[RMDB]
RNA sequence: GGGAACGACUCGAGUAGAGUCGAAAAACAUAUUACGAUAUGAUUCAGAUGGUGUCUUACUGGUUCGUACCAAGGGAGAUAAUGGUUUCUUGUUUCCAACCAAAGAACAAGUGGCGAGCCUGAAUAAAAAACUGACUGCCGUUCGCGGCAGUCAGAAGACACUCCUCACGUUCGCGUGAGGAGUGUCAAAAGAAACAACAACAACAAC
Reactivity to 2A3 in 0.01 (KOAc 150mM, MgCl2 10mM, bicine 150mM(pH8.5), 24C), signal-to-noise 1, nucleotides 027 to 156: a000c000a020u070a090u080u160a030c090g010a020u010a000u070g080a080u090u210c140a150g010a130u070g030g140u030g010u060c030u060u030a010c010u030g000g010u010u090c010g030u080a130c070c050a070a160g060g030g030a060g000a060u090a080a140u160g010g000u040u030u030c020u040u040g020u000u000u060c030c040a070a100c020c010a000a200a000g010a050a000c000a080a030g050u000g000g010c000g000a010g020c020c000u010g120a070a060u100a050a160a000a020a030a040c000u000g000a000c010u000g000c000c000g030u040u060c300g050c030g100g000c100a000g000u000c000a000g000a000a000